[RMDB]
RNA sequence: GGGAACGACUCGAGUAGAGUCGAAAAAGCCAAUCCUUCGGGAUUGGCUACAGCAACGAAGCAAAGCAACGAGACAAGACGUGCAAAAGAUCGAGCAUGCUACACACCCCAUCUUCGGAUGGGGUAACUCGACAAGUUUUUUCGAAAACUUGUCGAGAAAAGAAACAACAACAACAAC
Reactivity to 2A3 in 0.01 (KOAc 150mM, MgCl2 10mM, bicine 150mM(pH8.5), 24C), signal-to-noise 1, nucleotides 027 to 126: a030g010c010c000a000a010u000c000c000u040u060c180g080g000g000a010u010u000g000g000c010u000a000c040a010g000c000a090a040c020g060a100a030g040c040a140a050a000g000c000a050a060c030g020a010g030a130c070a090a020g110a120c070g080u050g050c020a030a030a060a120g110a050u110c020g020a010g060c070a040u070g010c020u090a020c080a010c000a030c110c000c000c000a000u000c000u040u000c170g080g000a000u000g000g000g000g000u000a000a000
Reactivity to DMS in 0.01 (KOAc 150mM, MgCl2 10mM, bicine 150mM(pH8.5), 24C), signal-to-noise 1, nucleotides 027 to 126: a110g020c000c000a000a010u000c000c000u000u000c170g010g010g020a000u000u000g000g040c000u010a020c020a050g000c050a030a180c120g010a030a120g020c050a030a130a050g060c020a020a040c100g000a100g010a100c090a120a060g010a090c150g000u000g050c030a050a080a080a080g010a040u000c100g010a170g010c040a090u020g020c020u000a060c100a090c140a090c020c000c020c000a020u000c000u000u020c130g050g000a030u000g010g000g000g010u000a000a000